[RMDB]
RNA sequence: GGGAACGACUCGAGUAGAGUCGAAAAGGCUCGUUUCGACGAGCCGUACCACCCGCAAGGGGAGGGUUUUCUAACUCUCCGGGUGUUGACGACACCCCGGCCCCACUAUGGUCAUGUUCGCAUGACCCACAAUGUUACGAUUCGUCGUAACAUUGUGAAAAGAAACAACAACAACAAC
Reactivity to 2A3 in 0.01 (KOAc 150mM, MgCl2 10mM, bicine 150mM(pH8.5), 24C), signal-to-noise 7, nucleotides 027 to 126: g000g000c000u000c010g010u020u070u070c120g070a030c000g000a010g010c000c000g000u000a000c000c000a030c000c000c000g030c100a120a120g070g010g010g020a030g010g000g020u020u020u080u050c120u110a050a050c010u020c000u010c030c020g000g000g000u040g020u010u080g150a080c100g020a010c000a010c010c000c020c020g070g000c010c000c010c000a040c050u140a140u120g000g000u000c000a000u000g020u030u050c130g000c080a000u010g000a000c010c010
Reactivity to DMS in 0.01 (KOAc 150mM, MgCl2 10mM, bicine 150mM(pH8.5), 24C), signal-to-noise 8, nucleotides 027 to 126: g000g020c010u000c000g010u010u000u010c170g020a030c000g010a010g010c000c010g000u000a060c050c050a170c190c000c000g010c150a130a180g000g000g000g000a030g000g000g000u000u000u010u020c230u010a040a030c020u000c010u000c020c020g000g010g020u000g000u000u000g010a120c190g010a250c030a010c010c000c010c020g000g000c010c000c010c010a110c240u000a080u010g010g000u000c000a010u000g010u010u010c200g010c000a020u000g000a010c000c000
Chemical mapping of a 177-nucleotide RNA with 2A3 and DMS. The DMS profile rests on 13,263 reads. Source: RMDB library RFMREP, as collected in RNAgym. DMS adducts were read by reverse transcription with MarathonRT. The reactions ran in a buffer of 150 mM KOAc, 10 mM MgCl2 and 150 mM bicine (pH 8.5), at 24 C.